[RMDB]
RNA sequence: GGGAACGACUCGAGUAGAGUCGAAAAACUUUUAGCGAUUAUCGUUAUAGAAAUGUCCUUGGCAUAUCGCUAUCCACAGAGGUAUUAGUAGCGCAAUAGCUAUUGAAGGACAUUACCUCUCAAAUAACAUGUCUUAUGUCUUCGGACAUAAGACAUGAAAAGAAACAACAACAACAAC
Reactivity to DMS in 0.01 (KOAc 150mM, MgCl2 10mM, bicine 150mM(pH8.5), 24C), signal-to-noise 4, nucleotides 027 to 126: a080c120u000u010u010u000a010g010c010g010a060u000u020a050u000c100g020u000u000a080u010a090g000a060a100a050u000g000u000c040c020u000u010g010g020c060a030u010a020u000c020g000c010u000a030u000c050c040a100c210a050g010a030g000g000u010a030u000u000a050g020u000a020g010c000g000c160a120a100u010a140g010c000u010a000u010u000g000a050a050g000g020a040c040a030u000u000a020c010c010u000c010u010c210a060a040a080u010a090a160
Reactivity to 2A3 in 0.01 (KOAc 150mM, MgCl2 10mM, bicine 150mM(pH8.5), 24C), signal-to-noise 4, nucleotides 027 to 126: a000c030u160u110u070u040a010g010c000g020a040u110u050a040u260c040g030u050u060a130u050a190g110a030a070a040u040g030u020c010c000u010u050g000g000c020a020u020a020u180c020g010c000u020a050u040c020c010a070c020a120g080a040g050g010u050a050u110u100a050g030u010a010g010c000g000c070a150a210u070a080g000c010u010a030u030u050g060a050a030g000g000a010c010a010u000u020a010c010c010u010c010u030c050a050a050a030u110a130a050